[RMDB]
Structure probing data (DMS and 2A3) for a 170-nucleotide construct.
For 2A3 the reverse transcriptase was SuperScript II with manganese.
The data come from the RNA Mapping Database (RMDB), library 15KLIB.
Conditions: 150 mM KOAc, 10 mM MgCl2 and 150 mM bicine (pH 8.5), 24 C.

RNA sequence: GGGAACGACUCGAGUAGAGUCGAAAAAUGAUUAAGCCAAAUGCUCUUCUUUGUGCUACUUGCCCCUUUGCUAAGGGUGAUAGCUGUUCUUCUAAUUGCAAACAUUCAGUUGCUCAGUUGGUUAGUUACGGACAUGGCUUCGGCCAUGUCAAAAGAAACAACAACAACAAC
Reactivity to DMS in 0.01 (KOAc 150mM, MgCl2 10mM, bicine 150mM(pH8.5), 24C), signal-to-noise 3, nucleotides 027 to 129: a080u000g000a080u020u010a070a130g060c070c040a050a050a120u000g030c050u040c000u010u000c110u000u040u040g050u040g020c040u030a040c110u010u030g030c000c000c000c000u000u030u060g040c150u010a120a180g020g070g030u020g020a000u090a040g040c010u010g010u010u010c040u080u000c100u080a090a090u040u030g010c060a080a060a090c130a060u000u000c120a120g020u030u040g020c040u020c110a100g040u030u000g000g010u000u000a070g030u020u040a120c100g020
Reactivity to 2A3 in 0.01 (KOAc 150mM, MgCl2 10mM, bicine 150mM(pH8.5), 24C), signal-to-noise 1, nucleotides 027 to 129: a000u110g000a100u080u050a060a020g200c000c000a000a000a000u010g000c000u000c000u020u000c000u000u060u110g080u010g000c000u000a070c140u010u020g000c000c000c000c090u000u040u100g080c010u040a040a040g050g000g000u110g000a000u000a030g000c000u000g060u120u010c000u180u040c000u030a070a000u170u030g050c030a060a030a030c110a000u090u230c060a110g020u000u000g000c020u000c040a000g000u030u030g080g060u130u000a090g030u040u000a000c150g000